[RMDB]
RNA sequence: GGGAACGACUCGAGUAGAGUCGAAAAUCAGCCUUCUGAGUUCCUCUUCUUCCUCCUUGCUGAGGAUCUUUCCUCCCGCGGAGAGCUGCUUCUUCUUGUUCUCGAGGGCCUUCCUUCUGCGGUGAUCAUACGGUGACCUUCGGGUCACCGAAAAGAAACAACAACAACAAC
Reactivity to 2A3 in 0.01 (KOAc 150mM, MgCl2 10mM, bicine 150mM(pH8.5), 24C), signal-to-noise 4, nucleotides 027 to 129: u070c000a010g030c010c030u130u010c040u060g010a020g000u040u020c000c000u010c000u050u000c010u050u040c020c010u020c020c000u050u130g030c080u050g030a020g010g000a020u000c020u020u090u020c010c020u130c010c000c000g030c000g000g000a050g000a010g010c030u040g020c000u060u040c000u050u030c000u090u150g040u100u060c030u000c030g010a040g010g020g010c010c000u030u030c030c000u030u050c030u030g010c020g000g020u060g020a020u050c020a040u020a080
The record gives the reactivity of an RNA of 170 nucleotides to 2A3. Conditions: 150 mM KOAc, 10 mM MgCl2 and 150 mM bicine (pH 8.5), 24 C. The 2A3 profile rests on 8,750 reads. Reactivities are given for positions 27 through 129.